[RMDB]
RNA sequence: GGGAACGACUCGAGUAGAGUCGAAAAGGCGUCGGUGAACUUCUUGGCCCACACCGGGUCGGAGGCGAUGAACACCGGCAGCGCGUUGACGAACGCCACCCCGGCGUCGAUAGCACACUGGGCGUAGACAAAAUAACCCUUUCGAGGGUUAUUUUGUAAAAGAAACAACAACAACAAC
Reactivity to 2A3 in 0.01 (KOAc 150mM, MgCl2 10mM, bicine 150mM(pH8.5), 24C), signal-to-noise 6, nucleotides 027 to 126: g120g010c040g000u060c010g040g010u050g030a060a040c010u040u030c020u190u300g010g020c020c040c000a100c030a040c040c130g010g000g000u030c020g020g030a010g010g020c090g060a140u210g090a100a030c020a010c020c000g010g020c040a060g020c050g000c020g000u010u050g090a080c040g040a120a020c010g020c020c000a060c020c010c000c010g010g010c000g000u000c010g050a070u100a050g070c070a010c000a020c070u060g040g040g000c040g040u040a040g010
Reactivity to DMS in 0.01 (KOAc 150mM, MgCl2 10mM, bicine 150mM(pH8.5), 24C), signal-to-noise 5, nucleotides 027 to 126: g000g010c030g020u000c010g000g000u000g010a150a140c020u000u000c010u020u040g020g000c000c010c000a080c150a140c250c170g010g000g000u020c000g000g000a000g000g010c120g030a130u020g020a120a210c030a010c000c020g010g020c010a050g020c050g000c030g000u000u010g000a120c170g020a060a060c040g010c000c050a090c080c040c010c050g000g000c020g000u000c020g010a100u020a110g000c050a080c040a060c020u020g000g000g010c050g010u000a070g010